[RMDB]
RNA sequence: GGGAACGACUCGAGUAGAGUCGAAAACGCGGAUCACUGGCGUCCAGCGGAGAAACAGGAGCUCGUCUCCUUCCUUUCGCUGCUGGCUCCACAUCCGAUCGUCGCUGAAGCUUCAACCCCAUACCGCCGUACAAUAUUGGUUCGCCAAUAUUGUACGAAAAGAAACAACAACAACAAC
Reactivity to DMS in 0.01 (KOAc 150mM, MgCl2 10mM, bicine 150mM(pH8.5), 24C), signal-to-noise 6, nucleotides 027 to 126: c060g010c020g010g000a010u000c020a050c100u000g000g000c050g000u020c010c000a010g000c000g010g010a060g000a010a010a010c240a020g000g010a010g020c030u010c300g000u010c000u000c000c000u000u000c040c030u000u000u000c000g010c000u000g010c000u000g000g000c010u000c000c000a020c110a020u000c000c010g010a060u000c030g000u000c050g010c050u000g010a080a120g000c080u000u000c060a070a120c030c010c010c050a120u010a100c130c070g020c180
Reactivity to 2A3 in 0.01 (KOAc 150mM, MgCl2 10mM, bicine 150mM(pH8.5), 24C), signal-to-noise 7, nucleotides 027 to 126: c030g000c010g010g000a010u010c010a010c070u000g000g000c010g050u080c000c010a000g010c010g100g020a040g000a040a040a140c300a170g010g010a000g010c070u130c300g300u160c100u020c010c000u010u040c000c000u000u000u000c010g010c030u010g000c000u010g000g000c000u000c000c000a020c010a000u000c000c000g000a140u070c010g030u020c020g000c080u120g100a110a030g030c030u130u090c050a070a090c020c000c000c010a020u090a080c050c060g110c040